[RMDB]
Structure probing data (DMS) for a 207-nucleotide construct.
Reactivities are given for positions 27 through 156.
RNA sequence: GGGAACGACUCGAGUAGAGUCGAAAAAACCCGUUGAUUGAAAUUGAACCGUCCUGUUAUCGAAAGAUAGGCAGAAGAUACGAAAUGUGUGACAGCAUGGGAAGUAAAGGCAGACCGAGGUUCCCUUAAAAUCGUCGAAUCUUCGGAUUCGACGAAACGUUUUAUUAACCUUCGGGUUAAUAAAACGAAAAGAAACAACAACAACAAC
Reactivity to DMS in 0.01 (KOAc 150mM, MgCl2 10mM, bicine 150mM(pH8.5), 24C), signal-to-noise 2, nucleotides 027 to 156: a140a130c000c000c010g090u000u000g000a080u000u010g010a050a190a120u010u000g000a060a080c000c030g020u000c050c000u000g050u010u010a030u000c050g010a260a170a160g020a030u010a040g030g020c050a010g020a060a130g020a140u000a120c070g000a040a060a070u020g050u000g040u000g000a130c070a120g010c020a060u000g020g030g000a060a080g020u000a020a060a080g040g010c000a070g050a140c030c030g010a060g000g010u000u000c000c000c000u000u020a020a060a060a090u010c010g010u010c020g010a020a010u000c020u000u010c300g110g000a010u000u000c010g000a010c000g010a010a050a060
About this RNA:
It was measured as part of the RMDB library M2RFPK. The reactions ran in a buffer of 150 mM KOAc, 10 mM MgCl2 and 150 mM bicine (pH 8.5), at 24 C.